Chemical mapping of a 207-nucleotide RNA with 2A3.
RNA sequence: GGGAACGACUCGAGUAGAGUCGAAAAAGUAGUGCUCUCCAGACUUGAAAGCCAAAUGCCUGUGCUCUCACAUUUCCUGGUAUCACUUGUGGGAGUAUUACUAUGGUCUGGUCCAGAAUUAUUGCUUACAUUAAUAUUGUAUGAUCAGCAUGCUACACAUCCCUCCCUGGUUCGCCAGGGAGGGAUGAAAAGAAACAACAACAACAAC
Reactivity to 2A3 in 0.01 (KOAc 150mM, MgCl2 10mM, bicine 150mM(pH8.5), 24C), signal-to-noise 2, nucleotides 027 to 156: a010g050u050a000g000u010g020c000u030c030u090c020c010a070g020a060c030u060u070g050a200a060a000g060c030c010a120a050a060u140g010c030c060u080g050u090g010c020u000c010u060c000a000c000a000u000u120u130c000c120u100g000g060u120a060u130c040a000c020u040u000g000u060g020g000g000a000g020u000a010u000u080a000c060u060a100u100g020g000u000c000u000g020g000u000c020c030a010g050a030a020u170u050a070u090u120g010c030u050u070a010c000a040u120u120a060a060u120a170u210u050g060u120a030u030g060a170u050c000a030g030c000a000u030g000c020u030a020c070a020

It was measured as part of the RMDB library OK3TST.